[RMDB]
Structure probing data (DMS and 2A3) for a 177-nucleotide construct. For DMS, 1,447 sequencing reads were counted. DMS adducts were read by reverse transcription with MarathonRT. Reactivities are given for positions 27 through 126. The reactions ran in a buffer of 150 mM KOAc, 10 mM MgCl2 and 150 mM bicine (pH 8.5), at 24 C. The data come from the RNA Mapping Database (RMDB), library OK2TRN.
RNA sequence: GGGAACGACUCGAGUAGAGUCGAAAAGGUGGUGAAACUGCAACGAGACUACCGUUCUACACCGCAAAUUACAGAUCUUGCUAACCGCGUGAUCGACCAAGCAGUAGGGCGGAUCGCAGGGACUCGGGCGAUAUUCGUGAUUCGUCACGAAUAUCGCAAAAGAAACAACAACAACAAC
Reactivity to DMS in 0.01 (KOAc 150mM, MgCl2 10mM, bicine 150mM(pH8.5), 24C), signal-to-noise 3, nucleotides 027 to 126: g010g010u000g000g000u010g010a110a140a150c160u000g010c080a070a090c100g040a090g010a170c090u010a100c020c000g010u000u010c010u000a010c010a080c180c070g020c030a110a080a060u060u040a060c160a100g000a010u010c000u000u010g010c010u000a070a190c300c240g000c000g000u000g000a060u000c000g000a110c160c140a160a100g000c060a060g000u000a020g020g000g000c020g000g000a050u000c190g000c050a030g000g010g020a060c060u000c040g000g010
Reactivity to 2A3 in 0.01 (KOAc 150mM, MgCl2 10mM, bicine 150mM(pH8.5), 24C), signal-to-noise 2, nucleotides 027 to 126: g140g000u080g000g030u040g070a080a040a070c030u070g040c060a130a040c080g040a000g040a080c040u080a100c050c010g000u010u000c000u030a000c020a040c030c130g000c030a120a150a040u180u060a080c060a050g020a010u010c000u050u120g020c000u040a090a130c070c060g000c010g050u020g000a010u000c000g020a040c050c000a110a030g000c010a000g010u030a000g010g040g030c020g000g000a030u050c040g000c080a050g040g060g020a030c020u030c080g020g080